[RMDB]
RNA sequence: GGGAACGACUCGAGUAGAGUCGAAAACAUGGGGAUAAGACCCUAUCAUGGUUAUAAUGACUUUUGGUGUAUCCAUCUUCCAAUAGAAUGGCAACUAGUCAGACAUCUGUUUAGACACCAAAAUCAUUAUCAAAAAGUACUUCGGUACUUUUUGAUAAAAAGAAACAACAACAACAAC
Reactivity to DMS in 0.01 (KOAc 150mM, MgCl2 10mM, bicine 150mM(pH8.5), 24C), signal-to-noise 5, nucleotides 027 to 126: c080a040u000g010g000g010g010a080u000a100a130g010a240c020c010c010u000a050u030c160a080u020g020g000u030u030a100u040a050a030u000g000a020c250u000u000u000u000g000g020u000g010u010a150u010c010c020a060u000c060u020u030c150c190a090a100u050a030g000a040a030u000g000g010c300a090a300c050u000a030g000u010c020a030g000a190c300a190u040c010u000g000u000u000u010a020g010a090c020a010c000c010a000a000a000a030u000c020a000u000
Reactivity to 2A3 in 0.01 (KOAc 150mM, MgCl2 10mM, bicine 150mM(pH8.5), 24C), signal-to-noise 6, nucleotides 027 to 126: c030a030u040g000g000g010g020a000u050a150a040g200a100c000c010c010u030a050u120c070a080u110g120g020u110u210a100u060a130a030u060g030a080c100u060u010u010u020g000g010u020g020u060a050u040c000c010a020u010c020u110u040c070c050a080a050u080a100g140a140a100u030g030g000c010a050a110c070u040a010g020u020c000a000g060a140c070a100u210c050u010g020u020u050u040a010g010a010c000a000c000c000a000a010a000a010u000c000a010u000